[RMDB]
RNA sequence: GGGAACGACUCGAGUAGAGUCGAAAAAAAGGAUUAUCAUUCAUGUCGCUAAUUGAAUCAAUGCCAUCCGAUGCGAAGUAUUAUGACCAAGCUGUGAAACAUGGAUUAUUCGAAAAAUGUGCGUUGAAUUUAGUGGUAGUUUCGACUACCACUAAAUAAAAGAAACAACAACAACAAC
Reactivity to DMS in 0.01 (KOAc 150mM, MgCl2 10mM, bicine 150mM(pH8.5), 24C), signal-to-noise 6, nucleotides 027 to 126: a060a070a100g010g010a060u000u000a070u010c100a090u000u000c040a050u000g010u000c090g010c080u010a080a070u000u000g010a090a080u000c070a050a040u000g010c010c020a050u000c060c050g010a110u000g010c060g000a080a100g010u000a050u000u000a100u010g010a090c100c020a030a170g010c050u000g010u010g000a120a050a070c080a040u000g010g010a070u000u000a080u000u000c030g000a020a080a040a070a060u010g010u000g010c060g010u000u000g010a070
Reactivity to 2A3 in 0.01 (KOAc 150mM, MgCl2 10mM, bicine 150mM(pH8.5), 24C), signal-to-noise 3, nucleotides 027 to 126: a020a010a000g110g000a070u120u090a050u170c030a010u100u040c010a020u070g050u090c000g030c060u080a090a070u040u060g050a020a010u040c010a010a050u090g080c010c000a080u030c040c030g080a080u110g020c050g020a010a010g030u030a020u190u060a100u160g020a010c000c030a030a000g060c040u030g030u060g150a130a110a020c020a020u030g000g010a010u030u040a020u030u060c040g080a050a000a010a030a080u110g070u040g070c100g010u030u070g030a050

Source: RMDB library OK2TST, as collected in RNAgym. This 177-nucleotide RNA was probed chemically with DMS and 2A3. The DMS profile rests on 8,192 reads. DMS adducts were read by reverse transcription with MarathonRT. Reactivities are given for positions 27 through 126.